[RMDB]
RNA sequence: GGGAACGACUCGAGUAGAGUCGAAAAGAGUACUCGAUCGAGUACGAGAGAUCACGAGUGUUCGAGAACGAUCGUGUACUCGAGUGUUCGAGUGAACGUUCGAACUCUCACGUGUACGUGUUCACACUCACGAGAUCGAGAACACUCUCGUACGAGAGUCGGCAAUGUGGUUCGCCACAUUGCCGACAAAAGAAACAACAACAACAAC
Reactivity to 2A3 in 0.01 (KOAc 150mM, MgCl2 10mM, bicine 150mM(pH8.5), 24C), signal-to-noise 1, nucleotides 027 to 156: g020a030g010u000a010c030u020c000g000a030u000c040g000a040g000u040a070c100g000a000g000a000g000a010u030c040a000c000g030a090g080u060g000u150u140c080g040a010g020a040a030c030g000a000u030c010g000u050g040u040a000c010u000c030g000a030g040u300g100u080u040c000g000a010g000u030g030a060a000c000g000u000u000c020g000a060a050c010u000c000u000c000a000c070g040u070g150u200a020c040g000u030g140u100u020c040a000c030a030c060u000c000a000c030g040a060g000a040u040c030g010a000g020a070a000c030a050c010u000c000u000c010g080u160a040c090g000a020g000a040

The record gives the reactivity of an RNA of 207 nucleotides to 2A3. Values cover nucleotides 27 to 156.